[RMDB]
RNA sequence: GGGAACGACUCGAGUAGAGUCGAAAACUUUUAACGUUUAUCCAGAAAAUGAAAUAGAUCGCCCACGCUAAGGAAACGAUCUAUUUCGUUUGUAAACCUUAUUAAGCCGACCGCCUAGUAGCGCGGCCUUAACCGUUCCAUUCGUGGAACGGUUAAGAAAAGAAACAACAACAACAAC
Reactivity to DMS in 0.01 (KOAc 150mM, MgCl2 10mM, bicine 150mM(pH8.5), 24C), signal-to-noise 5, nucleotides 027 to 126: c030u010u030u020u010a020a050c200g020u010u010u010a040u020c130c110a200g000a100a020a010a010u000g010a000a010a010u000a000g000a010u010c000g020c080c010c130a220c120g010c210u060a090a190g020g000a090a120a280c010g000a010u000c000u000a000u000u000u000c000g020u000u000u000g000u010a050a050a050c080c120u010u010a040u020u020a060a110g000c000c010g000a120c070c020g000c010c030u010a070g000u040a130g010c060g020c010g000g000c040
Reactivity to 2A3 in 0.01 (KOAc 150mM, MgCl2 10mM, bicine 150mM(pH8.5), 24C), signal-to-noise 6, nucleotides 027 to 126: c040u110u060u110u170a090a050c070g000u020u000u020a070u080c040c030a060g200a040a080a010a010u020g000a010a000a000u000a010g000a000u000c010g040c060c020c020a040c080g090c200u170a110a100g010g000a110a070a020c010g010a010u000c000u010a000u000u000u010c000g000u000u010u010g010u020a020a020a030c010c010u060u100a100u140u110a170a000g010c020c020g110a200c020c050g030c020c050u120a130g050u120a020g060c020g000c000g030g000c000
Conditions: 150 mM KOAc, 10 mM MgCl2 and 150 mM bicine (pH 8.5), 24 C.
This 177-nucleotide RNA was probed chemically with DMS and 2A3.
2A3 adducts were read by reverse transcription with SuperScript II with manganese.
For DMS the reverse transcriptase was MarathonRT.